[RMDB]
The record gives the reactivity of an RNA of 177 nucleotides to 2A3 and DMS.

RNA sequence: GGGAACGACUCGAGUAGAGUCGAAAAGCAGACAACAAAAUUCAGGAGGUUAUUUGACUGGAGCACCAGAGACUGCCUUUUCAACAUUUGCUCUUAACAUGCAUGCCUGGUGCAAGUGAUGAUAAUACGAUGUAGAGGUUUUCGAACCUCUACAUCGAAAAGAAACAACAACAACAAC
Reactivity to 2A3 in 0.01 (KOAc 150mM, MgCl2 10mM, bicine 150mM(pH8.5), 24C), signal-to-noise 2, nucleotides 027 to 126: g050c050a000g040a040c030a060a000c030a030a110a010a110u110u050c020a010g080g000a050g040g160u050u090a090u080u080u090g070a050c000u010g000g070a030g030c030a030c010c000a000g020a030g050a040c010u030g010c020c020u100u090u050u070c060a080a090c040a120u030u050u170g000c030u030c000u080u030a090a020c050a090u110g000c040a050u090g000c030c010u020g000g000u000g000c020a030a020g050u060g060a120u060g000a000u050a090a030u100a140
Reactivity to DMS in 0.01 (KOAc 150mM, MgCl2 10mM, bicine 150mM(pH8.5), 24C), signal-to-noise 3, nucleotides 027 to 126: g010c020a000g000a070c060a010a050c090a090a090a070a190u000u010c020a040g000g010a160g040g000u000u000a060u010u000u010g000a150c050u000g020g000a050g010c030a020c020c010a070g000a170g010a150c030u000g010c030c090u010u000u000u000c050a040a080c160a110u000u000u000g010c060u000c100u010u000a030a080c200a030u010g010c050a010u020g010c100c040u000g000g000u000g000c010a060a040g000u010g030a090u000g000a040u000a050a060u010a120

2A3 adducts were read by reverse transcription with SuperScript II with manganese. For DMS the reverse transcriptase was MarathonRT. The reactions ran in a buffer of 150 mM KOAc, 10 mM MgCl2 and 150 mM bicine (pH 8.5), at 24 C.